RNA sequence: GGGAACGACUCGAGUAGAGUCGAAAAGCCUAAAGUAUUCGUACUUUAGGCAAAAAGAUAUGGAGAGACUAGAGCAUCGAUCUACUGACUCGGAAACGAGUCGUAGGGAGCUCGGUCUCUCCUAAGUCAAAAAGGUCUCGUAUUCGUACGAGACCAAUGAAAGUCUGGUAUUCGUACCAGACUUUCAAAAAGAAACAACAACAACAAC
Reactivity to 2A3 in 0.01 (KOAc 150mM, MgCl2 10mM, bicine 150mM(pH8.5), 24C), signal-to-noise 1, nucleotides 027 to 156: g000c000c040u000a000a000a020g000u020a040u030u250c300g020u090a020c000u000u000u000a000g000g000c010a000a030a000a000a000g000a000u020a000u000g000g000a000g000a020g000a010c050u160a250g000a030g050c000a020u300c040g020a010u000c000u000a000c080u160g000a000c000u000c000g010g000a000a000a000c000g010a000g000u010c010g000u000a000g000g000g000a030g010c000u000c000g000g000u020c000u000c000u000c000c000u000a000a000g000u010c000a000a020a000a050a070g000g000u000c000u000c020g000u020a030u080u140c280g020u060a000c010g010a000g010a000c000c000a000a000